[RMDB]
RNA sequence: GGGAACGACUCGAGUAGAGUCGAAAAUGAGUGCUAGCCAUGGAGUACUAGUAUCUACACGACAUGGACUAGUAGCUGGAUCCUGACAGUCUGCACAUGAUAGAUGAUGAUCCGAUCGUCAUGGCUCUCGCUUUGGCUGAUUCGUCAGCCAAAGCGAAAAAGAAACAACAACAACAAC
Reactivity to DMS in 0.01 (KOAc 150mM, MgCl2 10mM, bicine 150mM(pH8.5), 24C), signal-to-noise 2, nucleotides 027 to 126: u000g000a070g010u000g030c020u030a040g000c020c020a020u000g010g000a210g000u000a050c200u000a020g010u020a050u000c110u000a080c180a060c050g000a140c030a060u010g000g000a070c000u000a030g030u000a040g050c040u000g000g010a070u010c080c050u000g000a140c160a080g040u000c020u020g000c040a130c070a050u000g000a070u000a170g000a070u010g010a090u010g010a130u000c140c100g000a040u000c040g000u000c000a020u000g020g020c030u000c080
Reactivity to 2A3 in 0.01 (KOAc 150mM, MgCl2 10mM, bicine 150mM(pH8.5), 24C), signal-to-noise 2, nucleotides 027 to 126: u170g040a010g040u050g010c000u020a000g040c000c010a020u000g000g020a020g010u020a040c060u050a050g080u060a150u080c060u030a070c080a030c090g030a000c010a010u030g020g050a090c000u010a010g000u030a050g060c010u150g030g010a100u040c030c000u020g080a070c040a040g040u020c040u060g040c020a050c000a210u080g020a060u050a300g020a020u090g010a060u060g050a080u000c060c010g030a050u030c030g060u040c000a000u040g000g000c020u000c010

Conditions: 150 mM KOAc, 10 mM MgCl2 and 150 mM bicine (pH 8.5), 24 C. An RNA of 177 nucleotides, treated with DMS and 2A3 and read out base by base. For DMS the reverse transcriptase was MarathonRT.